[RMDB]
RNA sequence: GGGAACGACUCGAGUAGAGUCGAAAAGACCAAUAACAGAAUCCACCACAGCGUAAAAUCAUCUGAUUGGGUGAGUUGGUCGCACCGCCAUUUGACGAACGAACGCCAAGCCUAAGCCGUCUUUGUGAACACGAGCUAGUCUUCGGACUAGCUCGAAGUUCUUGCAAAAGUUCGCUUUUGCAAGAACAAAAGAAACAACAACAACAAC
Reactivity to 2A3 in 0.01 (KOAc 150mM, MgCl2 10mM, bicine 150mM(pH8.5), 24C), signal-to-noise 2, nucleotides 027 to 156: g040a000c000c030a000a070u140a110a010c040a130g120a120a050u050c040c000a030c030c040a050c060a040g060c020g030u100a040a190a190a030u040c020a040u000c010u100g060a230u160u150g030g020g000u010g020a040g020u000u050g000g000u020c020g010c040a040c010c010g000c020c000a060u070u030u100g080a030c040g000a150a020c010g020a020a020c030g030c020c070a040a030g020c000c010u050a090a000g020c010c000g040u020c020u020u070u020g080u020g050a060a060c040a030c100g020a000g010c010u000a000g000u000c040u050u110c230g010g000a000c000u010a010g000c000u020c000g000a000a000
Reactivity to DMS in 0.01 (KOAc 150mM, MgCl2 10mM, bicine 150mM(pH8.5), 24C), signal-to-noise 1, nucleotides 027 to 156: g020a070c050c000a110a060u000a100a270c110a300g010a090a130u030c020c020a070c000c040a110c000a070g000c070g000u000a150a050a100a170u000c040a030u010c050u000g000a150u020u010g010g040g000u010g010a130g090u010u000g040g000u010c040g010c030a160c020c020g020c040c020a130u000u000u000g000a060c070g020a100a090c030g000a100a000c040g000c010c010a010a180g010c000c030u000a000a210g010c010c040g000u000c030u000u000u020g000u000g040a030a130c060a210c000g000a030g000c020u000a010g040u000c000u010u000c300g070g000a040c000u000a010g020c010u000c000g010a010a120